Structure probing data (2A3) for a 207-nucleotide construct. It was measured as part of the RMDB library OK3TST. Reactivities are given for positions 27 through 156.
RNA sequence: GGGAACGACUCGAGUAGAGUCGAAAAUCAACCGCGUACGGAAACCAUCCAAUAUUCCAUCGAACCUCGUUACUAUCUCGUGAUGACGGACUGUUCCAUCCGAAACGUACGCCUGGACAGCACGCGUCUGCUAUAACUCACGCAUUAGUAUCCAACCCGAGACGCUGAGGUUCGCCUCAGCGUCUCGAAAAGAAACAACAACAACAAC
Reactivity to 2A3 in 0.01 (KOAc 150mM, MgCl2 10mM, bicine 150mM(pH8.5), 24C), signal-to-noise 1, nucleotides 027 to 156: u070c000a030a030c060c040g040c000g010u000a000c050g060g000a220a070a060c050c000a050u020c000c000a080a000u070a120u200u060c040c070a050u050c030g080a050a090c020c030u090c040g140u100u060a050c090u020a010u010c060u000c130g090u200g010a090u090g050a030c030g050g000a020c000u040g030u090u000c000c000a000u030c020c010g060a070a000a050c000g010u000a000c030g040c020c020u050g000g060a050c030a060g000c060a030c160g070c000g000u010c020u020g020c040u170a080u030a240a080c010u010c060a010c000g040c000a070u030u030a000g050u140a080u090c050c010a000a070c000c030
For 2A3 the reverse transcriptase was SuperScript II with manganese.